Background:
An RNA of 207 nucleotides, treated with DMS and 2A3 and read out base by base. In probing experiments dimethyl sulfate is read out at A N1 and C N3, which are open when not base-paired.
[RMDB]
RNA sequence: GGGAACGACUCGAGUAGAGUCGAAAAACGCGGAGUACGCUCCGCGACAACCCUUCUUUCGACCCGCUAACCGAGACCUAUGGGUCGUUAAAUUACGUCUCUAUCUUACUCACAUAACAUCGCACAAAAAACGUGGUUCGGUUCGCCGAACCACGAAGUAAAUGUAAACCUUCGGGUUUACAUUUACAAAAGAAACAACAACAACAAC
Reactivity to DMS in 0.01 (KOAc 150mM, MgCl2 10mM, bicine 150mM(pH8.5), 24C), signal-to-noise 2, nucleotides 027 to 156: a090c020g030c000g030g000a030g090u000a080c230g050c020u010c000c000g000c030g020a020c050a060a140c020c020c050u010u000c060u000u010u020c020g000a010c000c000c040g000c110u000a110a110c050c090g010a090g020a050c020c050u030a090u000g020g010g010u000c020g020u000u010a020a090a080u000u000a060c050g000u000c010u010c000u000a120u020c060u000u000a060c050u000c050a080c040a110u010a020a070c050a100u000c060g050c070a150c080a010a060a090a060a070a160c000g030u020g010g030u000u000c000g000g050u000u000c230g040c030c020g010a010a020c010c000a000c000g010a010a050
Reactivity to 2A3 in 0.01 (KOAc 150mM, MgCl2 10mM, bicine 150mM(pH8.5), 24C), signal-to-noise 4, nucleotides 027 to 156: a000c020g020c000g010g010a000g010u050a050c200g040c080u000c000c000g050c010g010a000c010a010a050c000c010c000u070u120c100u070u160u140c010g000a010c010c020c000g020c180u210a030a030c060c020g030a020g000a020c010c020u050a080u190g000g000g000u000c000g010u010u020a010a000a020u170u050a010c020g010u000c000u000c010u020a120u070c070u070u130a100c060u090c090a050c030a160u200a200a040c030a130u140c110g050c160a050c150a060a060a050a070a070a030c060g000u000g000g010u000u000c000g000g050u010u070c210g030c070c000g000a000a000c000c000a000c000g000a000a000
2A3 adducts were read by reverse transcription with SuperScript II with manganese. Reactivities are given for positions 27 through 156. Conditions: 150 mM KOAc, 10 mM MgCl2 and 150 mM bicine (pH 8.5), 24 C. High 2A3 reactivity points to a flexible backbone, as in loops and unpaired stretches. Source: RMDB library M2RFPK, as collected in RNAgym.